[RMDB]
RNA sequence: GGGAACGACUCGAGUAGAGUCGAAAAGAAUAUAAAGCGCGAGGGACCAAUUGCGAGCGACCUCGCGCUACCAGCUGUCGACUCACCAAGCGCGCAGCCAGCUGGAGGUUACGCUCGCAACAGAAGACCCGUAUAGGCGAUUCGUCGCCUAUACGGGAAAAGAAACAACAACAACAAC
Reactivity to 2A3 in 0.01 (KOAc 150mM, MgCl2 10mM, bicine 150mM(pH8.5), 24C), signal-to-noise 1, nucleotides 027 to 126: g040a050a000u110a010u080a130a160a000g040c000g000c000g000a020g010g000g000a020c050c040a220a230u070u200g000c010g000a000g000c000g000a020c000c000u020c000g060c000g000c010u010a000c000c000a000g000c040u000g010u080c040g220a080c010u050c120a100c020c040a010a060g020c000g000c000g000c060a030g000c000c000a000g000c030u000g000g030a050g040g100u120u030a000c010g000c000u000c000g030c000a000a000c010a010g110a200a000g060a060